This 177-nucleotide RNA was probed chemically with DMS and 2A3. It was measured as part of the RMDB library OK2TRN.
RNA sequence: GGGAACGACUCGAGUAGAGUCGAAAAGCCGAGACGGAUGGGCCGCAUUCCCAAGCAACUGUUGAGCGGGGUGCCCGCGCACGUUGAUGGCAGGAUGAUCGGCAUCGCUCAAAAGGCCGGGGCUGCGUCAUUAAUAGGUGUUCGCACCUAUUAAUGAAAAAGAAACAACAACAACAAC
Reactivity to DMS in 0.01 (KOAc 150mM, MgCl2 10mM, bicine 150mM(pH8.5), 24C), signal-to-noise 9, nucleotides 027 to 126: g010c030c020g010a110g010a110c080g010g010a080u010g010g010g020c020c030g010c060a090u000u000c010c000c010a120a170g010c030a030a030c040u010g020u000u000g010a050g020c000g000g000g010g030u010g010c030c010c010g010c040g010c030a020c050g010u000u000g010a100u010g010g010c090a100g000g000a080u000g000a100u010c040g000g020c020a060u000c040g000c030u000c040a050a060a110a140g000g000c020c040g000g000g000g010c110u000g010c100g000
Reactivity to 2A3 in 0.01 (KOAc 150mM, MgCl2 10mM, bicine 150mM(pH8.5), 24C), signal-to-noise 8, nucleotides 027 to 126: g030c010c010g020a020g020a040c100g100g030a050u080g030g060g020c010c010g010c010a040u040u050c000c000c000a010a040g040c000a000a040c030u130g110u280u150g090a020g010c000g000g020g030g190u180g180c000c010c000g000c010g000c000a030c050g030u040u060g040a130u070g030g000c060a040g040g030a050u080g010a050u130c020g010g000c020a030u050c040g020c030u040c040a080a110a050a050g040g000c020c020g020g010g010g000c030u070g020c030g040
The reactions ran in a buffer of 150 mM KOAc, 10 mM MgCl2 and 150 mM bicine (pH 8.5), at 24 C.